[RMDB]
RNA sequence: GGGAACGACUCGAGUAGAGUCGAAAAUCGGAUGUCGAUCCCCUCUCCCGUUCGGGAAAAGGGGGACUCCGGAACUCCCUGCAGGUUGGGCACGAAGCCCCCACCGGGCGCUCCCCUCGGCAGACCGCCCAUUGGGUUCACACCCCCAGGCCGCGGGCACAUAGUAUAUGUUCGCAUAUACUAUGUGAAAAGAAACAACAACAACAAC
Reactivity to 2A3 in 0.01 (KOAc 150mM, MgCl2 10mM, bicine 150mM(pH8.5), 24C), signal-to-noise 3, nucleotides 027 to 156: u100c030g010g020a070u260g020u040c060g030a250u180c010c000c010c000u000c000u020c000c030c010g200u300u300c300g010g000g010a010a050a050a040g000g000g000g020g000a000c000u010c010c000g030g010a040a040c030u050c000c010c000u020g050c040a100g040g020u090u060g060g000g000c050a020c190g200a100a030g010c010c010c020c000c020a030c030c060g010g040g000c060g030c050u110c000c000c010c020u020c010g010g000c020a020g050a190c050c060g010c000c010c000a060u080u150g000g000g000u090u110c040a060c020a010c060c010c000c010c010a010g040g000c000c010g000c000g000g000g000
Reactivity to DMS in 0.01 (KOAc 150mM, MgCl2 10mM, bicine 150mM(pH8.5), 24C), signal-to-noise 2, nucleotides 027 to 156: u010c030g040g000a030u020g020u000c030g020a170u000c000c000c010c040u010c040u000c010c020c000g020u020u000c170g050g030g010a040a020a030a080g010g050g040g040g000a010c010u000c010c010g000g010a080a180c090u000c020c010c010u000g030c080a100g020g020u000u000g020g040g020c030a160c040g010a220a300g000c040c020c010c020c130a040c190c080g000g030g000c060g020c100u000c050c000c010c050u000c050g040g020c030a140g000a110c100c040g010c010c000c010a190u010u010g000g030g040u010u020c200a140c130a250c040c020c010c000c020a140g010g040c030c020g040c190g000g030g000